[RMDB]
RNA sequence: GGGAACGACUCGAGUAGAGUCGAAAACAGACUCACUUCGGUGAGUCUGAAAGGAGUUAUCGAUAGCGAAAACUACCAGAUUACUCAAGGGUAGUGACAAAAAAAGUUAGAGCUUCGGCUCUAACAACUGCAUUACAGUGUUCGCACUGUAAUGCAGAAAAGAAACAACAACAACAAC
Reactivity to 2A3 in 0.01 (KOAc 150mM, MgCl2 10mM, bicine 150mM(pH8.5), 24C), signal-to-noise 2, nucleotides 027 to 126: c020a000g010a010c000u000c000a000c000u050u140c160g100g000u020g000a000g000u000c010u020g000a000a000a000g060g040a090g040u120u090a070u090c040g050a080u120a070g110c040g070a060a030a020a050c000u050a030c000c020a010g000a100u080u130a030c030u040c090a050a040g190g000g000u040a030g060u060g070a030c100a010a190a000a000a000a020a040g000u000u000a000g000a000g000c000u000u040c300g040g000c010u000c010u000a000a000c000a000a010
Reactivity to DMS in 0.01 (KOAc 150mM, MgCl2 10mM, bicine 150mM(pH8.5), 24C), signal-to-noise 2, nucleotides 027 to 126: c010a020g000a010c010u000c000a010c000u000u020c120g040g030u000g000a000g010u000c000u000g010a060a100a070g000g000a030g010u000u000a040u000c020g020a110u010a010g010c050g000a090a060a150a160c010u020a010c010c010a200g010a030u000u010a010c050u020c020a130a110g010g010g000u000a010g000u000g000a070c080a020a030a070a050a020a080a140g010u000u000a000g010a000g020c000u000u020c250g020g010c000u000c000u000a000a010c000a060a070
An RNA of 177 nucleotides, treated with 2A3 and DMS and read out base by base. The RNA was probed in 150 mM KOAc, 10 mM MgCl2 and 150 mM bicine (pH 8.5) at 24 C. It was measured as part of the RMDB library M2PK50. The DMS profile rests on 1,810 reads.